This 177-nucleotide RNA was probed chemically with 2A3 and DMS. For 2A3, 637 sequencing reads were counted. Source: RMDB libraries RFM100 and RFMREP, as collected in RNAgym. The reactions ran in a buffer of 150 mM KOAc, 10 mM MgCl2 and 150 mM bicine (pH 8.5), at 24 C.
[RMDB]
RNA sequence: GGGAACGACUCGAGUAGAGUCGAAAAUGCAUUCAUGAAGGGUAGAGACAUGAUGAAUGUUCUCACCUGAGUUAGAACCAAACCCAGCGCAGGCAGCUGCCCUGAGCUUUGUUAUUACAAUUUUGGCCUCGCUCCAAAAAUUCGUUUUUGGAGCGAGAAAAGAAACAACAACAACAAC
Reactivity to 2A3 in 0.01 (KOAc 150mM, MgCl2 10mM, bicine 150mM(pH8.5), 24C), signal-to-noise 2, nucleotides 027 to 126: u090g010c020a080u010u150c000a040u170g040a030a030g000g000g030u100a080g050a010g000a040c000a000u060g010a070u230g040a010a000u030g060u290u000c000u000c000a000c000c030u000g000a010g000u020u110a060g000a010a020c030c010a070a080a050c010c010c000a000g020c020g010c010a000g030g000c040a070g030c070u140g010c040c100c000u000g010a000g010c000u060u170u020g120u060u020a100u090u080a080c120a090a110u140u190u140u180g080g000c010
Reactivity to DMS in 0.01 (KOAc 150mM, MgCl2 10mM, bicine 150mM(pH8.5), 24C), signal-to-noise 2, nucleotides 027 to 126: u020g000c080a120u000u000c030a080u000g000a120a090g000g000g000u010a150g010a010g000a010c040a030u000g000a190u070g000a180a000u000g000u050u000c000u000c010a060c000c000u000g020a050g020u050u050a070g010a070a050c300c040a050a060a120c000c000c020a010g000c110g000c080a040g000g000c040a120g000c140u040g030c080c000c010u000g010a050g020c040u010u000u000g010u000u000a060u010u040a090c160a060a180u020u000u020u000g020g020c260